[RMDB]
RNA sequence: GGGAACGACUCGAGUAGAGUCGAAAACCGCCCAGGCAGGCUUGAGCCAAUUCCGGGCGAAGGGAGCGCGGGGGAAGGAUCGGCGCUCGAGAGGGGCUGAAUGGCAAAGAGUAUUGGAAUUUCGGAGAAACUACUCCCAAGAAGGAAAAAAGAGCAAUCUUGAAUACGAGUUCGCUCGUAUUCAAGAAAAAGAAACAACAACAACAAC
Reactivity to 2A3 in 0.01 (KOAc 150mM, MgCl2 10mM, bicine 150mM(pH8.5), 24C), signal-to-noise 1, nucleotides 027 to 156: c030c000g030c000c010c000a030g020g040c040a050g010g040c020u080u280g050a060g050c030c000a020a060u110u000c050c000g010g000g010c000g000a040a040g050g060g000a010g050c060g000c010g000g030g010g000g000a040a060g040g010a070u060c060g020g000c020g010c040u040c040g050a040g010a020g020g000g010g050c020u000g040a080a050u140g010g010c020a030a020a030g020a050g020u080a110u170u180g010g000a030a050u030u110u170c040g060g030a040g040a080a090a000c060u120a050c000u050c000c010c000a000a080g090a030a090g020g000a020a130a080a000a000a050g020a000g010c000a010a070